About this RNA:
An RNA of 177 nucleotides, treated with 2A3 and DMS and read out base by base. In probing experiments dimethyl sulfate is read out at A N1 and C N3, which are open when not base-paired. The 2A3 profile rests on 1,041 reads. For 2A3 the reverse transcriptase was SuperScript II with manganese. The reactions ran in a buffer of 150 mM KOAc, 10 mM MgCl2 and 150 mM bicine (pH 8.5), at 24 C. Values cover nucleotides 27 to 126. For DMS, 1,284 sequencing reads were counted.

RNA sequence: GGGAACGACUCGAGUAGAGUCGAAAAAAGAGACUUCAGAAGGAUAUAGUACAGUAACCUCUAUAUCUAGCCGACAAUGGUCUGAAGAGGUAAGUCUUAUGGCUGAUGAUGACAUUGAUGAUGAAGAGCAUUCUGAGUGUUUCGACACUCAGAAUGCAAAAGAAACAACAACAACAAC
Reactivity to 2A3 in 0.01 (KOAc 150mM, MgCl2 10mM, bicine 150mM(pH8.5), 24C), signal-to-noise 2, nucleotides 027 to 126: a000a010g080a000g010a000c000u000u000c000a000g010a100a060g100g020a000u000a000u000a010g040u140a060c030a110g070u090a090a110c000c070u010c000u000a000u000a010u000c020u020a110g020c030c000g090a190c130a120a160u210g060g020u000c010u010g000a010a000g050a000g040g090u040a040a010g000u090c000u110u090a070u110g040g000c020u040g010a040u050g040a080u070g010a100c030a070u060u130g040a050u030g000a000u020g040a040a070g050a020
Reactivity to DMS in 0.01 (KOAc 150mM, MgCl2 10mM, bicine 150mM(pH8.5), 24C), signal-to-noise 1, nucleotides 027 to 126: a060a120g010a180g000a050c020u000u030c010a000g000a210a070g000g000a040u020a000u000a010g020u050a080c170a070g100u030a130a080c210c130u000c020u000a010u000a190u000c000u020a140g000c010c040g000a140c100a060a100u080g040g020u070c000u000g000a170a000g000a110g000g000u030a040a040g020u000c020u020u040a010u030g030g000c030u000g020a070u000g000a040u000g000a010c030a020u010u000g000a120u020g020a080u010g040a070a020g000a160
DMS adducts were read by reverse transcription with MarathonRT. It was measured as part of the RMDB library OK1LIB.